[RMDB]
RNA sequence: GGGAACGACUCGAGUAGAGUCGAAAAGUGAUCAGGCGAGCCACUUCUUCGGCGAACUCGCGAGCCGAGCCUGAUCACGCUGGGUUUGGCAACUGCCGGGCUUGCCGACCGGGCAUCAAGCGGCCGGCUCGGUUAAUCGGUUCGCCGAUUAACCGAGAAAAGAAACAACAACAACAAC
Reactivity to DMS in 0.01 (KOAc 150mM, MgCl2 10mM, bicine 150mM(pH8.5), 24C), signal-to-noise 3, nucleotides 027 to 126: g010u000g010a030u000c000a000g000g020c020g020a170g010c030c030a110c100u010u010c150u020u020c020g000g020c020g000a040a040c030u020c100g010c050g010a030g010c020c000g000a160g000c000c000u010g000a020u000c010a000c000g000c020u000g000g000g000u020u030u020g000g020c000a030a040c050u020g010c030c020g000g000g030c290u000u010g010c010c000g000a020c020c010g000g000g000c050a190u040c130a110a060g000c130g000g010c020c050g010g000
Reactivity to 2A3 in 0.01 (KOAc 150mM, MgCl2 10mM, bicine 150mM(pH8.5), 24C), signal-to-noise 4, nucleotides 027 to 126: g020u000g020a010u010c010a010g020g000c040g040a030g070c040c050a110c070u250u110c040u120u060c060g000g010c030g020a050a060c100u090c210g070c080g030a010g000c000c000g000a000g010c000c000u010g000a000u000c000a000c000g000c010u080g040g000g010u070u130u300g030g000c050a050a040c060u060g050c060c020g030g010g020c040u020u030g000c000c000g020a030c000c000g050g000g000c060a090u080c040a110a060g050c010g060g010c000c010g000g000
Structure probing data (DMS and 2A3) for a 177-nucleotide construct. The 2A3 profile rests on 2,864 reads. Conditions: 150 mM KOAc, 10 mM MgCl2 and 150 mM bicine (pH 8.5), 24 C.